[RMDB]
RNA sequence: GGGAACGACUCGAGUAGAGUCGAAAAUAGUCGAUGAAGGUCUGCAGUAUGUGCAAAAUGUGACCAUUGUAAUACACUUGAUUGCAAAAGUAAUCGAUCUGACCGUGCGUCAGUUUGAUUCCGUCGGCAGCAUCGAGAAUGGUACACACGUCGUGCGGAGUUGUAGACCAUUCGUGGUCUACAACUCAAAAGAAACAACAACAACAAC
Reactivity to DMS in 0.01 (KOAc 150mM, MgCl2 10mM, bicine 150mM(pH8.5), 24C), signal-to-noise 1, nucleotides 027 to 156: u020a120g040u010c030g020a030u000g030a080a080g000g020u000c020u000g010c040a120g000u020a060u000g000u000g000c030a060a070a080a110u000g010u010g010a120c030c020a030u010u010g000u010a040a130u030a110c120a150c020u000u020g000a050u000u030g020c010a090a050a120a070g040u000a030a040u010c000g030a040u000c020u030g020a020c000c060g050u000g060c150g050u000c020a000g000u000u000u000g010a000u000u000c010c010g000u000c050g020g080c030a190g020c070a080u010c010g000a080g000a090a060u000g000g020u000a060c050a080c010a090c040g010u000c100g050u000g030c030g010
Reactivity to 2A3 in 0.01 (KOAc 150mM, MgCl2 10mM, bicine 150mM(pH8.5), 24C), signal-to-noise 3, nucleotides 027 to 156: u100a000g060u040c040g010a010u060g060a070a040g060g030u070c040u060g030c030a020g060u240a050u230g130u040g060c060a000a040a060a110u110g030u010g010a050c010c000a000u020u020g040u130a100a070u100a180c090a030c090u010u030g040a060u070u170g000c000a030a150a030a040g040u080a010a020u000c000g010a010u010c000u000g030a060c050c000g210u240g070c170g000u020c010a030g000u040u050u050g010a000u040u040c060c020g060u060c050g130g000c020a000g020c020a010u010c000g010a000g000a030a020u020g010g010u070a030c000a000c000a000c020g060u050c040g060u100g030c010g030
This 207-nucleotide RNA was probed chemically with DMS and 2A3. Conditions: 150 mM KOAc, 10 mM MgCl2 and 150 mM bicine (pH 8.5), 24 C. Values cover nucleotides 27 to 156. Source: RMDB library OK3TST, as collected in RNAgym.